[RMDB]
RNA sequence: GGGAACGACUCGAGUAGAGUCGAAAAGAGCGGACACUUUCGAGUGUCCGCUCAAAAAGCGUACUACACGAUCGCGUCUACCCACCUCCCAAAUAGGAGAGGACGAACUACGAUCCGUGUAUCGCAAAAAAUCGAAACUCGUUCGCGAGUUUCGAAAGAAUACAUCUUUCUUCGGAAAGAUGUAUUCAAAAGAAACAACAACAACAAC
Reactivity to DMS in 0.01 (KOAc 150mM, MgCl2 10mM, bicine 150mM(pH8.5), 24C), signal-to-noise 2, nucleotides 027 to 156: g010a010g060c030g020g020a030c010a000c010u000u010u030c260g010a040g060u010g020u000c010c010g000c000u000c000a010a020a040a110a110g010c010g030u010a080c080u000a030c010a010c000g030a040u000c020g040c040g000u020c030u000a090c020c000c010a300c210c000u010c000c000c020a070a130a300u010a050g000g000a040g000a160g020g020a060c070g010a160a260c050u000a040c010g010a030u000c040c050g050u000g000u010a020u000c000g010c010a000a060a070a070a070a130u000c000g020a010a000a020c000u000c000g070u000u000c300g020c010g000a010g000u000u000u010c000g010a010a030a070
Reactivity to 2A3 in 0.01 (KOAc 150mM, MgCl2 10mM, bicine 150mM(pH8.5), 24C), signal-to-noise 4, nucleotides 027 to 156: g000a010g000c000g010g030a010c090a000c030u140u170u260c300g060a040g000u000g000u010c000c000g100c010u000c010a000a010a000a000a000g000c010g010u060a060c060u000a000c050a000c000g000a000u010c010g010c010g050u000c030u090a170c000c020c050a070c010c000u030c000c020c050a170a300a140u300a100g010g020a040g000a040g020g020a010c030g020a100a050c080u180a030c180g000a000u010c100c020g010u000g000u000a020u060c010g050c000a030a060a050a030a000a050u010c000g000a000a000a000c010u000c010g020u100u050c140g000c020g170a020g000u000u010u000c010g000a000a010a000
Structure probing data (DMS and 2A3) for a 207-nucleotide construct. High 2A3 reactivity points to a flexible backbone, as in loops and unpaired stretches. The reactions ran in a buffer of 150 mM KOAc, 10 mM MgCl2 and 150 mM bicine (pH 8.5), at 24 C. Reactivities are given for positions 27 through 156.